[RMDB]
RNA sequence: GGGAACGACUCGAGUAGAGUCGAAAACAACCCAUCAGCCAGUUGAGCAGAUGGCAAGCUUGCGUGUGACACCCAAUAUGAGCACCUGGCGCCCAUGUGACCAGGUUGAGUCUGCGGUAGCGUGGCACUGUAGUCGACAUUUCGAUGUCGACUACAGAAAAGAAACAACAACAACAAC
Reactivity to DMS in 0.01 (KOAc 150mM, MgCl2 10mM, bicine 150mM(pH8.5), 24C), signal-to-noise 3, nucleotides 027 to 126: c190a130a200c110c000c010a080u020c080a100g000c010c010a110g000u000u010g010a100g040c040a040g000a030u010g000g010c060a100a070g010c090u000u000g000c140g010u010g000u010g010a060c140a070c020c000c000a070a130u000a090u000g000a120g010c040a050c000c010u000g000g000c030g000c030c200c130a100u020g010u020g000a160c010c010a050g050g020u000u000g030a160g000u000c010u000g000c070g020g030u000a060g010c080g020u000g040g010c100a180
Reactivity to 2A3 in 0.01 (KOAc 150mM, MgCl2 10mM, bicine 150mM(pH8.5), 24C), signal-to-noise 2, nucleotides 027 to 126: c020a010a090c000c030c000a040u080c030a010g000c020c000a050g070u090u080g130a020g030c040a000g030a070u050g080g030c040a020a020g000c060u140u090g070c040g040u080g060u100g070a030c020a070c000c010c000a080a010u120a090u270g110a040g000c040a000c010c000u030g000g000c010g050c010c080c020a100u290g060u080g060a290c000c010a010g000g000u020u060g030a030g010u050c000u040g000c010g100g110u090a010g030c100g030u090g000g050c030a030
The record gives the reactivity of an RNA of 177 nucleotides to DMS and 2A3. Conditions: 150 mM KOAc, 10 mM MgCl2 and 150 mM bicine (pH 8.5), 24 C.